[RMDB]
RNA sequence: GGGAACGACUCGAGUAGAGUCGAAAACUGGCUCCACAUCCGAUCGUCGCUGAGGCCUGCGCGCCCCUCGCCCGGAGCUUCUCUCUGGCUACUACCCGGUGGAUACAACUGAAGCUUCAACCCCGUACCGCUUUUCUUGAUUCUCAGCUGCUCUCCGCCUUACUGGAUUGUUCGCAAUCCAGUAAGGAAAAGAAACAACAACAACAAC
Reactivity to 2A3 in 0.01 (KOAc 150mM, MgCl2 10mM, bicine 150mM(pH8.5), 24C), signal-to-noise 2, nucleotides 027 to 156: c020u020g050g000c030u050c020c030a060c010a100u110c070c030g060a130u070c070g080u040c040g020c100u060g050a020g050g050c020c050u100g020c040g010c040g010c010c030c000c000u020c020g000c010c040c020g000g020a020g000c000u060u010c020u000c000u000c000u020g010g060c020u060a010c000u030a070c030c020c000g000g010u010g020g050a080u090a170c020a120a030c140u100g030a050a010g020c000u050u050c030a050a030c000c020c000c020g040u070a060c040c030g030c000u050u070u100u140c000u040u150g090a100u120u000c040u010c030a030g000c020u020g010c020u040c010u030c100c030g050
The record gives the reactivity of an RNA of 207 nucleotides to 2A3. Values cover nucleotides 27 to 156. The 2A3 profile rests on 1,371 reads.